[RMDB]
RNA sequence: GGGAACGACUCGAGUAGAGUCGAAAACAGACUCACUUCGGUGAGUCUGAAAGGUGUAAUCGAUAGCGAAAACUACCAGAUUACUCAAGGGUAGUGACAAAAAAAGUUAGAGCUUCGGCUCUAACAAGUAAUGUAAACUGUUCGCAGUUUACAUUACAAAAGAAACAACAACAACAAC
Reactivity to 2A3 in 0.01 (KOAc 150mM, MgCl2 10mM, bicine 150mM(pH8.5), 24C), signal-to-noise 6, nucleotides 027 to 126: c000a000g010a000c000u000c000a000c010u030u030c090g110g000u000g000a000g000u000c000u000g000a010a000a000g090g000u070g020u060a030a040u050c030g040a100u090a060g120c120g120a050a060a030a040c010u010a010c000c010a020g000a080u040u100a060c030u020c110a070a080g100g000g000u030a040g030u050g080a060c110a020a210a010a020a000a010a020g010u010u010a000g000a000g010c010u030u060c280g110g000c000u000c000u010a000a000c000a000a000
Reactivity to DMS in 0.01 (KOAc 150mM, MgCl2 10mM, bicine 150mM(pH8.5), 24C), signal-to-noise 7, nucleotides 027 to 126: c020a020g000a020c000u000c000a000c000u000u010c200g030g010u000g010a010g010u000c000u000g000a020a070a070g010g010u000g010u000a010a010u000c010g000a040u000a020g000c020g010a100a070a130a160c010u000a010c010c010a190g020a030u000u000a020c020u010c050a110a120g000g000g020u000a050g010u000g000a080c130a000a000a060a060a060a080a120g000u000u000a000g000a020g020c010u000u010c210g020g000c000u000c000u000a000a000c000a030a060